[RMDB]
RNA sequence: GGGAACGACUCGAGUAGAGUCGAAAAGAAGUUGUGUUCGCACAACUUCAAAAGCUAGUAGGUACUGGGCAAGUAGUACCUAGUAGUAGCCCGUACAAGUAAAAAUCAACCUCUUCGGAGGUUGAAACUAACGACUUAACUUCGGUUAAGUCGUUAGAAAAGAAACAACAACAACAAC
Reactivity to DMS in 0.01 (KOAc 150mM, MgCl2 10mM, bicine 150mM(pH8.5), 24C), signal-to-noise 2, nucleotides 027 to 126: g000a000a000g010u000u000g020u000g010u000u020c300g070c000a010c000a000a000c000u000u000c000a020a050a140a210g010c010u000a010g000u000a040g000g000u000a000c010u010g000g020g020c190a070a180g020u000a020g020u000a000c000c000u000a020g000u000a010g000u000a080g000c000c000c020g010u030a080c300a080a150g000u000a040a100a140a140a140u000c000a010a010c000c000u000c000u000u020c240g030g010a010g020g040u010u010g000a010a030a130
Reactivity to 2A3 in 0.01 (KOAc 150mM, MgCl2 10mM, bicine 150mM(pH8.5), 24C), signal-to-noise 1, nucleotides 027 to 126: g000a000a000g000u000u000g020u000g010u050u050c140g110c070a010c010a000a000c020u000u000c000a010a000a010a000g000c000u000a020g040u010a010g100g000u000a000c050u060g160g140g000c160a140a030g100u080a000g000u000a110c020c010u010a000g020u010a000g000u000a030g000c000c000c000g000u110a060c030a130a080g080u150a060a070a120a040a020u020c000a000a000c020c010u000c020u070u130c220g110g020a000g030g050u000u010g000a000a010a000